Overview:
The record gives the reactivity of an RNA of 177 nucleotides to 2A3 and DMS. The RNA was probed in 150 mM KOAc, 10 mM MgCl2 and 150 mM bicine (pH 8.5) at 24 C.
[RMDB]
RNA sequence: GGGAACGACUCGAGUAGAGUCGAAAAAAGAUAUGGAUAUGUUGUCAGCAGUAUAGGCUCGAUGAAAUGCUUCGGAAACGAAGCAUGGAGAGCCUAGACUGCUUGGAUUUACAUAUCCUAAGUCAAACCAUCUCAGAAUGUUCGCAUUCUGAGAUGGAAAAGAAACAACAACAACAAC
Reactivity to 2A3 in 0.01 (KOAc 150mM, MgCl2 10mM, bicine 150mM(pH8.5), 24C), signal-to-noise 1, nucleotides 027 to 126: a010a020g110a050u170a060u210g000g000a000u010a000u010g000u000u020g030u010c000a000g000c010a010g000u020a010u010a050g030g030c000u020c010g300a300u040g040a010a000a010u000g000c010u000u000c000g070g040a030a010a060c010g020a000a000g000c000a000u000g000g010a000g000a000g030c000c000u000a000g000a000c000u010g000c000u000u060g000g020a030u210u270u080a000c010a000u000a000u000c070c000u000a170a020g030u010c000a000a100a090
Reactivity to DMS in 0.01 (KOAc 150mM, MgCl2 10mM, bicine 150mM(pH8.5), 24C), signal-to-noise 1, nucleotides 027 to 126: a110a070g000a010u000a300u000g000g000a030u000a010u010g000u000u000g000u000c010a010g000c010a010g000u010a030u000a010g000g010c010u020c010g000a160u010g050a140a110a010u000g000c000u000u000c020g060g010a150a130a160c010g000a020a010g000c010a010u000g000g000a030g000a040g030c000c000u000a000g000a010c010u010g000c010u000u010g010g010a030u000u000u000a010c010a020u010a000u000c010c000u000a050a140g000u000c020a130a130a200
The 2A3 profile rests on 2,532 reads.